[RMDB]
RNA sequence: GGGAACGACUCGAGUAGAGUCGAAAAUGCUUAAUUAACGCAGCGACGUCCUACCCGGUUUGCCUGUAGGCUGGGAUAGGGCGUAAGACAUACAGGAUAGGAGGUUGCCAACCUCCCCUGAGGUAACCUCCGAAACUCUACGGGGAUAGCUUCUCUCGGAUGAUUUAAUCUUCGGAUUAAAUCAUCCAAAAGAAACAACAACAACAAC
Reactivity to 2A3 in 0.01 (KOAc 150mM, MgCl2 10mM, bicine 150mM(pH8.5), 24C), signal-to-noise 2, nucleotides 027 to 156: u080g000c010u140u090a130a100u190u140a300a120c110g050c090a050g020c030g060a050c010g030u000c000c000u010a020c010c000c000g000g000u000u000u000g010c000c000u000g000u000a010g010g010c000u000g000g030g030a070u020a000g010g000g020c000g000u010a000a000g030a010c000a010u000a000c000a000g000g000a030u010a010g010g000a000g000g000u000u000g000c000c000a020a020c010c050u000c000c000c000c000u020g010a010g030g000u010a000a010c020c000u000c000c000g000a000a010a000c090u110c050u140a060c150g000g000g000g000a000u000a000g000c040u040u030c020u000c010u040c070